[RMDB]
RNA sequence: GGGAACGACUCGAGUAGAGUCGAAAAGAGGGCCGCGGUGCUCUGGAGUAGAGGCUCUGCCUUCGAAACACCAUCGAUCGUCCCUUCUUCUUUACCUUCUUCUGGCUCUUCCGAUGAGACGCGACCGGUGGCAUCACCUCUCGGUUCGUCCCAACCUUGAUGUUCUGUGCUUCGGCACAGAACAUCAAAAAGAAACAACAACAACAAC
Reactivity to 2A3 in 0.01 (KOAc 150mM, MgCl2 10mM, bicine 150mM(pH8.5), 24C), signal-to-noise 2, nucleotides 027 to 156: g030a000g000g010g000c020c020g050c000g040g010u010g000c000u020c020u020g000g020a010g010u010a000g000a000g010g010c020u100c280u300g050c070c000u150u180c040g000a010a000a020c000a030c150c000a000u020c000g100a300u020c010g010u010c000c010c000u050u070c010u010u040c000u020u060u120a050c000c050u050u070c030u070u010c020u140g030g000c030u010c000u150u030c040c030g120a120u090g040a020g000a070c040g020c080g090a030c030c020g000g000u020g050g050c090a090u160c030a140c000c000u010c010u110c000g000g050u050u020c000g020u000c000c010c000a040a040c010c010u060
Overview
An RNA of 207 nucleotides, treated with 2A3 and read out base by base. For 2A3 the reverse transcriptase was SuperScript II with manganese. Reactivities are rounded to 0.1 and cut off at 0 and 3.